This 177-nucleotide RNA was probed chemically with DMS and 2A3. Conditions: 150 mM KOAc, 10 mM MgCl2 and 150 mM bicine (pH 8.5), 24 C. DMS adducts were read by reverse transcription with MarathonRT.
[RMDB]
RNA sequence: GGGAACGACUCGAGUAGAGUCGAAAAAUGGCGUGAACCGCGUUCACGUCGGCUUCCAAUUUCUGGCGGGCUACAGGCCUCGGCCCUCUUGUAGUGACCUGCGCCUACUUUCGCGCGGGAUGCUCGAGGGUGAUAAUUUUUUCGAAAAUUAUCACCCAAAAGAAACAACAACAACAAC
Reactivity to DMS in 0.01 (KOAc 150mM, MgCl2 10mM, bicine 150mM(pH8.5), 24C), signal-to-noise 5, nucleotides 027 to 126: a100u040g000g010c000g000u000g000a010a010c010c260g030c240g000u000u000c000a020c000g010u000c020g000g000c240u000u010c020c020a120a100u010u010u030c080u010g010g010c090g000g000g020c040u000a130c170a090g000g000c030c020u010c110g000g030c010c000c050u020c060u010u020g030u020a030g020u000g000a110c000c000u010g000c020g000c000c200u010a110c180u020u050u010c300g000c000g000c000g010g000g010a040u010g000c010u000c040g000a300
Reactivity to 2A3 in 0.01 (KOAc 150mM, MgCl2 10mM, bicine 150mM(pH8.5), 24C), signal-to-noise 9, nucleotides 027 to 126: a000u070g000g000c020g010u010g010a020a010c070c190g100c180g080u010u000c000a000c000g010u000c000g010g010c020u050u010c020c010a070a140u090u120u080c080u070g050g010c020g020g000g000c010u070a060c060a130g080g050c020c010u030c070g090g010c000c010c010u070c030u030u110g040u070a050g010u010g110a070c000c000u000g000c010g000c010c020u170a210c050u170u240u200c050g000c000g000c000g000g010g010a020u070g010c000u010c020g020a060